[RMDB]
An RNA of 177 nucleotides, treated with 2A3 and read out base by base. Reactivities are given for positions 27 through 126. Conditions: 150 mM KOAc, 10 mM MgCl2 and 150 mM bicine (pH 8.5), 24 C.

RNA sequence: GGGAACGACUCGAGUAGAGUCGAAAAAGUUUAUUCAGGCAAUUCACACUAAUUAACUACUAUUGCUACUACUGUUUUUGUCUGCUAUUGUGAAUGCGUAUAAAUUAACUGGAGCUAGCAAAUGAAGCGCCCUGCUACAAUUCGUUGUAGCAGGGCGAAAAGAAACAACAACAACAAC
Reactivity to 2A3 in 0.01 (KOAc 150mM, MgCl2 10mM, bicine 150mM(pH8.5), 24C), signal-to-noise 1, nucleotides 027 to 126: a000g000u010u050u050a060u000u000c030a000g020g010c130a140a100u170u100c000a020c000a110c030u160a160a160u110u150a090a070c000u240a000c030u050a050u000u130g000c000u000a000c000u000a000c000u000g020u010u010u010u010u010g000u000c000u030g000c000u000a080u100u000g260u040g300a140a020u050g000c050g130u020a100u000a100a010a010u180u000a030a000c050u000g050g050a000g040c270u130a000g000c000a020a000a110u300g000a000a000g100